RNA sequence: GGGAACGACUCGAGUAGAGUCGAAAAUUUUUCUGAGCAGUAGAUCUCAAUAGUGGGCUUAAAAUGUUCAGUAAAUCAUGCUGUAAACAGAUGUGGCAUCAUCAGGCUUUGUUGUUCCAUUUAUAUAACAUAGGCAGAGUCAAUUUAGCAUAACUCAUCAUAUUUAGUAUUUCGAUACUAAAUAUGAAAAAGAAACAACAACAACAAC
Reactivity to DMS in 0.01 (KOAc 150mM, MgCl2 10mM, bicine 150mM(pH8.5), 24C), signal-to-noise 3, nucleotides 027 to 156: u010u000u030u000u000c030u000g010a090g020c010a070g010u000a160g010a090u000c030u000c030a070a160u000a140g010u000g030g030g030c030u010u010a040a080a100a110u000g010u000u000c020a030g010u000a050a050a090u000c060a100u000g010c020u020g010u010a090a070a100c060a100g020a070u010g040u000g020g040c000a080u000c050a070u000c060a130g010g010c020u000u000u000g020u000u000g000u000u010c040c020a140u000u010u000a090u010a120u000a110a080c060a130u000a090g010g010c030a060g010a050g010u010c030a060a120u000u000u000a100g020c070a090u000a050a100c020u000c040a300
Reactivity to 2A3 in 0.01 (KOAc 150mM, MgCl2 10mM, bicine 150mM(pH8.5), 24C), signal-to-noise 2, nucleotides 027 to 156: u070u070u010u030u010c020u010g030a020g010c000a010g010u120a020g020a100u030c030u010c040a030a070u120a150g160u150g010g010g030c020u070u090a070a130a070a060u060g020u030u030c010a020g030u100a010a060a080u130c050a030u110g040c020u040g070u160a050a100a080c040a040g030a040u030g040u030g080g000c040a040u040c000a020u010c060a160g040g000c000u080u050u040g020u010u030g030u070u020c010c010a010u020u110u060a140u030a030u020a070a040c030a040u100a070g050g000c010a010g010a010g060u030c000a000a040u070u150u120a040g000c030a050u080a080a040c030u030c090a060